[RMDB]
RNA sequence: GGGAACGACUCGAGUAGAGUCGAAAAAAAAUCUAGUGCAAAUAUUGUCUUAAUUACUUAGGCUAAAAGAAAUAAGUAUUAAAGCGGGACAAGGCAUCGUCAUUUGAUACAAAUAUUGAUCAAUGGAACAAGAAACACUACUUCGGUAGUGUUUCAAUCAUGCAUUGAGAUUCGUCUCAAUGCAUGAAAAAGAAACAACAACAACAAC
Reactivity to 2A3 in 0.01 (KOAc 150mM, MgCl2 10mM, bicine 150mM(pH8.5), 24C), signal-to-noise 2, nucleotides 027 to 156: a000a020a000a020u090c070u100a060g000u030g010c020a000a200a190u090a070u120u000g020u000c060u030u190a120a100u070u020a120c020u020u020a010g060g070c030u100a120a150a050a000g040a010a210a030u040a030a000g000u000a040u040u070a110a040a030g090c050g010g030g020a020c020a020a000g030g010c000a020u060c060g050u020c000a040u010u020u180g030a020u070a030c060a040a000a040u170a130u180u150g010a030u020c010a020a040u020g010g010a060a060c060a300a150g000a020a050a000c010a010c000u000a000c000u040u020c180g020g000u000a000g000u000g000u000u000u010c000a010a000
Reactivity to DMS in 0.01 (KOAc 150mM, MgCl2 10mM, bicine 150mM(pH8.5), 24C), signal-to-noise 1, nucleotides 027 to 156: a120a030a040a010u010c000u010a080g050u000g000c040a120a000a120u000a060u000u010g000u000c010u000u000a060a070u020u000a030c040u010u000a070g000g030c120u020a010a090a050a190g010a110a090a100u000a020a060g010u000a040u000u000a050a030a060g030c120g000g050g040a070c030a080a090g010g020c020a020u000c040g000u000c030a070u030u000u000g000a050u010a150c120a030a040a120u010a100u000u010g030a070u000c050a040a140u000g020g010a060a080c070a030a140g020a060a020a000c000a000c000u000a000c000u020u020c300g060g010u000a030g020u000g000u030u000u000c000a080a140